[RMDB]
RNA sequence: GGGAACGACUCGAGUAGAGUCGAAAAGAAAGUGUGCACUUGAUACCGCGUGACUUCGGUCACGUAGUGGCAGCGCGCAGGACUUUGCUGCUACUGCUUAGUCCUGCGGUAUCUUGUGCUCACGAAAACCCACUAUAUAUUUCGAUAUAUAGUGGGUAAAAGAAACAACAACAACAAC
Reactivity to 2A3 in 0.01 (KOAc 150mM, MgCl2 10mM, bicine 150mM(pH8.5), 24C), signal-to-noise 9, nucleotides 027 to 126: g130a030a090a010g000u000g000u010g000c000a000c000u000u010g000a000u000a000c000c000g000c010g020u030g010a000c000u040u080c190g140g020u090c040a020c070g000u010a010g000u010g060g050c090a040g070c030g010c020g000c110a060g050g030a060c040u090u070u120g000c000u010g020c020u060a080c060u080g000c010u020u040a010g000u020c000c020u020g000c000g000g000u000a000u000c000u000u000g000u000g000c000u010c000a000c000g020a040a010a000
Reactivity to DMS in 0.01 (KOAc 150mM, MgCl2 10mM, bicine 150mM(pH8.5), 24C), signal-to-noise 6, nucleotides 027 to 126: g010a090a080a170g000u000g000u000g000c000a010c000u000u000g000a010u010a010c000c000g000c000g020u010g000a010c000u000u030c150g010g000u010c040a030c070g010u000a000g020u000g000g000c160a070g000c070g020c120g000c080a050g010g000a080c060u000u010u000g000c010u000g010c110u030a080c100u000g000c010u000u010a030g000u000c000c020u000g000c000g000g010u000a000u000c000u000u000g000u000g000c010u000c000a000c000g010a060a030a080
Annotation:
This 177-nucleotide RNA was probed chemically with 2A3 and DMS. For DMS the reverse transcriptase was MarathonRT. Source: RMDB library OK1LIB, as collected in RNAgym. 2A3 adducts were read by reverse transcription with SuperScript II with manganese. The 2A3 profile rests on 102,117 reads.